[RMDB]
An RNA of 177 nucleotides, treated with 2A3 and DMS and read out base by base. The RNA was probed in 150 mM KOAc, 10 mM MgCl2 and 150 mM bicine (pH 8.5) at 24 C. 2A3 adducts were read by reverse transcription with SuperScript II with manganese. Values cover nucleotides 27 to 126. The data come from the RNA Mapping Database (RMDB), library OK1LIB.

RNA sequence: GGGAACGACUCGAGUAGAGUCGAAAACAGAAAUUUUCUCGUCCUGGACAAGAGGCUUCGACAGCGAGAGGCGGAGAAGCCGCAGCGAGCCAGGAGACACCCGCUGCGACGUCGAUAGAAGACAAAAUAAAAUACGGGGUUUCGACCCCGUAUUUUAAAAAGAAACAACAACAACAAC
Reactivity to 2A3 in 0.01 (KOAc 150mM, MgCl2 10mM, bicine 150mM(pH8.5), 24C), signal-to-noise 3, nucleotides 027 to 126: c040a030g190a030a100a040u170u070u180u030c050u030c030g110u060c030c000u000g040g010a030c050a210a070g060a020g070g000c000u000u000c000g070a060c080a220g020c100g060a160g020a040g300g050c000g000g090a050g000a010a000g000c000c050g010c020a000g050c030g040a060g020c000c020a020g000g000a000g000a000c060a010c000c000c040g050c050u060g010c030g020a150c030g040u030c020g020a040u130a230g190a140a000g040a070c080a000a200a000a080
Reactivity to DMS in 0.01 (KOAc 150mM, MgCl2 10mM, bicine 150mM(pH8.5), 24C), signal-to-noise 3, nucleotides 027 to 126: c160a100g010a100a100a100u020u040u000u010c050u000c030g020u010c000c030u000g000g000a070c100a110a190g000a100g030g010c010u040u010c010g030a190c230a070g060c000g030a170g000a180g010g030c020g000g000a300g000a010a020g000c020c000g020c070a090g050c160g020a150g000c040c000a010g030g000a140g000a100c140a030c030c030c010g000c030u000g010c030g000a060c110g000u000c010g000a110u050a100g020a100a120g000a040c070a040a060a070a150